[RMDB]
RNA sequence: GGGAACGACUCGAGUAGAGUCGAAAACUGACAUCCAACCACACCUUCUUGUCCAUCAUUCCAAGCAGCAUACACGCUUUUGGCUUGCACAACCUUGGAUCCGGCGAUGUUGAAGUUGGAUGAGGGCCGCGUAUCAAGAGUUCGCUCUUGAUACGCGAAAAGAAACAACAACAACAAC
Reactivity to 2A3 in 0.01 (KOAc 150mM, MgCl2 10mM, bicine 150mM(pH8.5), 24C), signal-to-noise 7, nucleotides 027 to 126: c030u020g050a040c010a010u010c010c000a010a030c030c010a050c000a030c040c010u060u050c030u120u130g050u070c030c010a130u080c020a060u150u010c010c000a020a030g010c020a040g000c010a060u100a140c070a060c150g060c020u140u080u120u240g110g000c010u020u070g020c030a040c000a120a100c020c020u040u020g040g010a050u030c030c060g000g000c040g040a050u060g030u030u020g030a060a040g000u010u020g020g000a020u010g010a050g010g050g020c010
Reactivity to DMS in 0.01 (KOAc 150mM, MgCl2 10mM, bicine 150mM(pH8.5), 24C), signal-to-noise 2, nucleotides 027 to 126: c010u000g000a040c100a050u000c010c020a010a020c000c050a090c130a040c030c070u000u000c040u020u070g060u040c040c050a030u130c160a070u000u000c060c000a000a090g010c160a090g010c090a050u020a120c120a070c150g030c080u030u010u010u090g010g000c050u000u000g020c060a040c050a070a130c200c050u020u000g000g000a000u020c090c050g020g010c100g060a010u000g000u010u000g000a060a210g000u000u000g000g000a000u000g000a300g020g000g000c150
Description: The data come from the RNA Mapping Database (RMDB), library OK1LIB. An RNA of 177 nucleotides, treated with 2A3 and DMS and read out base by base. For 2A3, 6,245 sequencing reads were counted. Conditions: 150 mM KOAc, 10 mM MgCl2 and 150 mM bicine (pH 8.5), 24 C. For DMS the reverse transcriptase was MarathonRT. Reactivities are given for positions 27 through 126.